Structure probing data (2A3) for a 177-nucleotide construct. Conditions: 150 mM KOAc, 10 mM MgCl2 and 150 mM bicine (pH 8.5), 24 C. For 2A3, 383 sequencing reads were counted.
[RMDB]
RNA sequence: GGGAACGACUCGAGUAGAGUCGAAAACAAACUUUAGAGUCUGCAUUGGGUCUAGGUCUCAUUGAGGACAGAUAGAGAGCACACUGUGUAACCUUUAGAGUCUGCAUAGAGCCUCGGUCUCAUUGAGCAUGGGGCCGAUCUUCGGAUCGGCCCCAUGAAAAGAAACAACAACAACAAC
Reactivity to 2A3 in 0.01 (KOAc 150mM, MgCl2 10mM, bicine 150mM(pH8.5), 24C), signal-to-noise 1, nucleotides 027 to 126: c010a000a200a000c050u130u100u160a080g090a000g140u040c000u120g060c100a180u130u240g000g000g000u070c040u040a100g030g020u120c000u020c000a290u010u090g060a120g070g000a020c000a040g080a050u080a110g010a000g000a000g000c000a000c010a050c070u040g000u000g020u000a120a180c020c000u000u000u150a050g040a010g040u000c030u060g000c000a000u000a080g000a010g000c000c040u040c000g050g000u000c000u000c000a050u000u120g000a000g040